[RMDB]
RNA sequence: GGGAACGACUCGAGUAGAGUCGAAAAGAUAUGGAGCAUCUAUGAGACUAUGAAGUCGGAAACGAUGGAGUCUGAUAGAGUGCUCCUAAGUCAAACUUACCACCACAGUUCGCUGUGGUGGUAAGAAGUGUCAAAUACUGUUCGCAGUAUUUGACACAAAAGAAACAACAACAACAAC
Reactivity to DMS in 0.01 (KOAc 150mM, MgCl2 10mM, bicine 150mM(pH8.5), 24C), signal-to-noise 3, nucleotides 027 to 126: g000a040u000a300u000g000g010a010g010c010a050u000c000u000a000u000g000a030g000a020c000u000a210u000g000a110a170g000u000c000g000g010a150a110a180c010g010a010u000g010g000a010g020u000c000u000g000a010u000a030g000a020g010u010g020c000u000c000c000u000a020a070g010u010c030a140a110a230c010u000u000a000c000c000a020c000c000a000c010a010g010u000u000c240g010c000u000g010u000g010g010u000g000g000u000a000a000g000a020a050
Reactivity to 2A3 in 0.01 (KOAc 150mM, MgCl2 10mM, bicine 150mM(pH8.5), 24C), signal-to-noise 4, nucleotides 027 to 126: g000a010u060a050u190g000g000a000g020c010a000u000c000u020a000u040g150a000g000a010c020u050a180u300g050a040a000g030u010c010g000g030a080a050a030c010g000a000u010g000g000a010g000u000c010u020g030a000u010a000g060a040g120u050g010c000u000c000c000u000a040a000g020u010c020a030a020a060c010u000u000a010c010c000a010c010c000a010c000a020g020u100u100c180g090c190u000g000u000g010g000u000g010g000u000a000a000g000a000a000

Chemical mapping of a 177-nucleotide RNA with DMS and 2A3.